[RMDB]
RNA sequence: GGGAACGACUCGAGUAGAGUCGAAAAGGCGGCCACGCCACGUGUGUGAUCCUAGGCACACACUGCAGCACCUCGCUGAUCCGAUGGGACGUGGCUGGUGUGAGGAGAUCGGAGUGCUUUCCAUGUGCGCAAGGACAUCGUUCGCGAUGUCCUUGCGAAAAGAAACAACAACAACAAC
Reactivity to 2A3 in 0.01 (KOAc 150mM, MgCl2 10mM, bicine 150mM(pH8.5), 24C), signal-to-noise 1, nucleotides 027 to 126: g050g040c050g000g000c030c000a040c040g020c030c000a010c040g050u000g000u000g000u020g020a060u110c030c080u080a050g140g000c020a000c000a010c000a010c050u120g030c030a010g020c040a070c000c100u100c100g040c020u020g030a050u000c000c030g100a160u210g030g050g000a040c000g030u000g020g040c020u030g050g010u030g040u020g030a040g040g030a080g000a050u020c000g040g010a040g020u060g010c010u050u080u000c020c010a070u080g060u030g070
Reactivity to DMS in 0.01 (KOAc 150mM, MgCl2 10mM, bicine 150mM(pH8.5), 24C), signal-to-noise 1, nucleotides 027 to 126: g010g020c060g010g010c000c020a020c030g020c040c010a080c110g050u000g010u010g010u000g000a090u010c070c050u000a110g000g000c000a040c000a010c000a040c010u000g020c090a060g010c110a060c070c140u010c100g020c030u000g020a090u000c050c030g000a090u030g030g010g010a060c050g010u010g010g010c000u000g020g020u000g000u000g000a120g000g000a100g020a060u000c110g000g000a050g020u000g010c060u000u000u000c010c060a060u010g030u000g000
The record gives the reactivity of an RNA of 177 nucleotides to 2A3 and DMS. The reactions ran in a buffer of 150 mM KOAc, 10 mM MgCl2 and 150 mM bicine (pH 8.5), at 24 C. The 2A3 profile rests on 1,480 reads. For DMS, 1,475 sequencing reads were counted. For DMS the reverse transcriptase was MarathonRT. The data come from the RNA Mapping Database (RMDB), library OK2TST.